The record gives the reactivity of an RNA of 177 nucleotides to 2A3. It was measured as part of the RMDB library OK1LIB. Reactivities are given for positions 27 through 126. 2A3 adducts were read by reverse transcription with SuperScript II with manganese.
RNA sequence: GGGAACGACUCGAGUAGAGUCGAAAACAUCUACAGGAGAUAUAACAGUUGAUUUUGAUUCACUAGGUAUAACUCCAACCCCUUUACCUAAUGCUCCAGAGGAAAAUGCUUUGUCAUUAACUUCCCCGAUCACCUCAGGGUUCGCCCUGAGGUGAUCAAAAGAAACAACAACAACAAC
Reactivity to 2A3 in 0.01 (KOAc 150mM, MgCl2 10mM, bicine 150mM(pH8.5), 24C), signal-to-noise 3, nucleotides 027 to 126: c030a080u060c000u180a050c030a080g010g050a010g020a010u050a030u000a030a070c010a050g020u080u030g150a110u080u070u070u270g200a110u110u070c010a020c030u010a070g150g020u020a010u040a080a000c000u010c000c010a010a080c000c000c000c010u020u110u080a070c020c020u080a070a120u150g010c000u000c000c050a010g020a050g030g070a060a170a010a000u060g010c070u090u110u120g130u300c030a020u040u030a110a160c010u050u020c000c000c000c010